[RMDB]
RNA sequence: GGGAACGACUCGAGUAGAGUCGAAAACAAGACUUCGGUCUUGGGUGCACCUUUGUGUUAUGGAGCUGCUAGGAAGAGGAUCGCCCAUUGGGCGAUCUCCCCACCUUCCAAACAGCGUUGAAAUAACACUCUGGUAUGGGUUAUCGUUCGCGAUAAACCACUUGACAGAAUUCGUUCUGUCAAGUGGAAAAGAAACAACAACAACAAC
Reactivity to 2A3 in 0.01 (KOAc 150mM, MgCl2 10mM, bicine 150mM(pH8.5), 24C), signal-to-noise 4, nucleotides 027 to 156: c010a000a000g020a000c060u080u230c300g150g000u010c000u020u020g030g020g100u160g070c100a020c000c000u020u020u020g000u010g000u000u000a000u010g030g030a020g000c010u010g010c050u050a020g010g000a000a000g000a020g010g010a000u000c010g020c000c060c170a300u230u300g020g000g000c010g000a010u000c040u020c000c010c000c000a030c010c010u000u000c000c000a070a050a030c000a000g000c010g010u000u070g000a010a000a000u000a000a000c000a010c010u010c000u000g000g030u080a170u160g140g030g030u050u050a030u050c030g070u100u080c240g010c040g120a040u090a090a060a040
Reactivity to DMS in 0.01 (KOAc 150mM, MgCl2 10mM, bicine 150mM(pH8.5), 24C), signal-to-noise 3, nucleotides 027 to 156: c010a020a010g000a060c000u000u010c280g050g000u000c010u000u020g000g000g050u020g030c030a060c010c000u010u020u010g030u000g020u010u000a010u000g020g010a300g040c010u000g030c000u000a300g000g010a100a060g010a300g000g000a010u000c030g020c020c000c040a300u000u010g010g030g070c010g010a000u000c010u000c260c050c010c090a300c210c020u000u000c000c000a110a150a020c010a020g020c030g000u000u010g000a190a130a040u000a010a010c010a020c000u010c030u000g010g030u000a060u000g000g000g020u010u000a010u000c020g020u000u000c120g010c040g000a080u000a070a170a240
An RNA of 207 nucleotides, treated with 2A3 and DMS and read out base by base. The DMS profile rests on 3,943 reads. In probing experiments dimethyl sulfate is read out at A N1 and C N3, which are open when not base-paired. For 2A3 the reverse transcriptase was SuperScript II with manganese. The 2A3 profile rests on 3,232 reads. The data come from the RNA Mapping Database (RMDB), library RNAMAK.